[RMDB]
RNA sequence: GGGAACGACUCGAGUAGAGUCGAAAAACAGAAAGAAGGAGUUUAAAUUAGAUUUGCAAACGGACGGUACUAAAUACCGUCACUUUUACGUCUAACUUAUCGUUAACUCUGCAAAAAGAAAACAAGAAAAACAAGCGUGAGUUCGCUCACGCUUGAAGAAACAUAUAGAGUUCGCUCUAUAUGUUUCAAAAGAAACAACAACAACAAC
Reactivity to DMS in 0.01 (KOAc 150mM, MgCl2 10mM, bicine 150mM(pH8.5), 24C), signal-to-noise 1, nucleotides 027 to 156: a040c050a100g000a110a070a120g030a130a080g000g000a090g000u000u000u010a030a010a080u000u000a010g020a030u000u010u020g090c050a020a030a070c070g000g010a000c030g000g050u000a020c030u000a050a000a300u000a000c010c000g000u000c000a000c010u000u000u000u000a010c010g000u000c000u000a000a010c060u000u000a000u000c160g000u010u000a050a050c020u000c000u000g000c040a030a070a090a000a050g000a010a050a090a120c050a050a120g000a090a090a140a240a110c000a000a010g050c000g080u010g000a020g040u020u000c300g000c020u000c010a000c020g040c000u000u000g000a020a140
Reactivity to 2A3 in 0.01 (KOAc 150mM, MgCl2 10mM, bicine 150mM(pH8.5), 24C), signal-to-noise 3, nucleotides 027 to 156: a000c030a010g100a040a130a010g030a050a030g040g010a030g000u030u060u170a060a060a050u040u020a000g020a040u050u070u200g040c040a020a040a020c050g020g000a000c000g000g000u010a020c050u180a100a110a100u050a010c000c000g000u010c000a060c000u000u020u000u050a010c020g000u000c000u020a040a020c010u050u120a060u160c020g090u020u020a000a000c010u010c020u070g010c060a050a040a060a020a010g090a040a080a020a010c080a030a100g120a100a080a050a000a010c000a000a000g000c000g000u000g010a000g010u050u160c190g020c100u000c000a000c010g000c000u000u000g000a010a000